[RMDB]
RNA sequence: GGGAACGACUCGAGUAGAGUCGAAAAAGAAAACGCUUGCAUCCAAUGCGAUCCUGGCCCCGCAUGGAUGCGGCCGACGCUCGUCUCGAUCGCUAACGCAAUGCCGAGUGAGAUAGAUGGAUAACUAGAGCCUCACUAGCUUCGGCUAGUGAGGCUCAAAAGAAACAACAACAACAAC
Reactivity to 2A3 in 0.01 (KOAc 150mM, MgCl2 10mM, bicine 150mM(pH8.5), 24C), signal-to-noise 1, nucleotides 027 to 126: a000g190a050a000a000a000c010g010c050u160u300g000c030a000u000c030c040a090a160u020g010c000g050a060u110c000c000u050g200g000c000c010c000c000g000c000a000u000g000g000a000u000g040c010g000g000c000c000g000a030c000g000c030u000c000g120u000c000u000c070g120a070u030c020g000c030u090a040a040c030g050c050a110a150u190g110c120c000g000a000g000u090g000a070g030a030u030a080g070a090u060g130g000a030u060a080a050c010u000a020